[RMDB]
An RNA of 177 nucleotides, treated with DMS and 2A3 and read out base by base.
RNA sequence: GGGAACGACUCGAGUAGAGUCGAAAAUAGCUGUCGCUGCGACCACCUCGUCGAGGUGGUGGGCCAAUAGCGGCUCGCCGCCGGUGAACCGCACGCUGGUGACGCCGAGCCGAGUUACCGCGAUGUGAUCCUCUACUCGAUUCGUCGAGUAGAGGAUAAAAGAAACAACAACAACAAC
Reactivity to DMS in 0.01 (KOAc 150mM, MgCl2 10mM, bicine 150mM(pH8.5), 24C), signal-to-noise 4, nucleotides 027 to 126: u020a090g010c050u010g020u000c040g020c020u000g010c030g030a060c000c010a020c010c000u000c030g030u010c220g010a020g000g030u000g000g010u000g000g010g030c020c200a100a100u010a100g000c020g010g010c000u000c020g000c040c040g000c000c000g000g000u000g000a140a090c160c110g020c100a080c050g030c030u000g020g020u000g010a130c120g040c100c020g000a040g010c010c010g000a050g010u000u000a100c070c070g000c030g010a080u010g020u010g000
Reactivity to 2A3 in 0.01 (KOAc 150mM, MgCl2 10mM, bicine 150mM(pH8.5), 24C), signal-to-noise 3, nucleotides 027 to 126: u080a000g060c050u030g060u060c030g020c030u030g040c020g050a020c000c000a010c010c000u050c030g300u130c260g030a010g000g010u000g000g000u000g000g060g030c020c020a060a060u100a110g050c000g000g030c000u010c000g020c010c010g000c000c020g000g030u050g040a120a070c050c100g100c080a040c020g000c040u030g000g000u000g020a060c020g020c090c040g000a000g000c010c000g040a020g020u020u030a040c040c050g000c040g020a050u110g080u150g140
For DMS, 4,387 sequencing reads were counted. The RNA was probed in 150 mM KOAc, 10 mM MgCl2 and 150 mM bicine (pH 8.5) at 24 C. Reactivities are given for positions 27 through 126.